[RMDB]
Overview:
An RNA of 177 nucleotides, treated with DMS and 2A3 and read out base by base. It was measured as part of the RMDB library TTRDES. DMS adducts were read by reverse transcription with MarathonRT. The DMS profile rests on 12,312 reads.
RNA sequence: GGGAACGACUCGAGUAGAGUCGAAAAGAUAUGGAGAAUGUCUUUGGAGCUUUGAUCUAUACGUCGGAAACGACGUGAUAGGGAGCUCGACAUUCUCCUAAGUCAAAGUCCUAGUUCGCUAGGACAAGUACACAAUGAUGUUCGCAUCAUUGUGUACAAAAGAAACAACAACAACAAC
Reactivity to DMS in 0.01 (KOAc 150mM, MgCl2 10mM, bicine 150mM(pH8.5), 24C), signal-to-noise 4, nucleotides 027 to 126: g010a020u000a030u010g000g000a020g010a020a010u000g010u000c010u010u020u000g040g010a020g020c010u000u000u010g000a000u020c010u000a000u000a020c000g010u000c010g020g000a020a010a040c000g020a010c010g020u010g000a010u000a010g000g000g010a000g030c000u000c010g020a010c000a010u000u000c000u000c000c000u000a000a040g010u000c010a110a130a190g010u000c000c000u000a010g010u010u020c290g020c000u000a010g000g010a000c000a020a100
Reactivity to 2A3 in 0.01 (KOAc 150mM, MgCl2 10mM, bicine 150mM(pH8.5), 24C), signal-to-noise 7, nucleotides 027 to 126: g000a000u020a010u060g000g010a020g000a010a010u010g000u010c000u270u300u300g300g050a010g000c030u300u300u040g010a000u000c000u000a000u010a020c010g000u000c010g000g000a010a000a010c000g000a000c000g000u010g010a000u010a000g000g000g010a010g000c020u020c060g000a000c000a000u000u000c000u000c000c000u000a000a000g000u000c000a060a160a050g000u000c000c000u010a010g020u030u090c300g020c180u010a000g020g000a000c000a000a030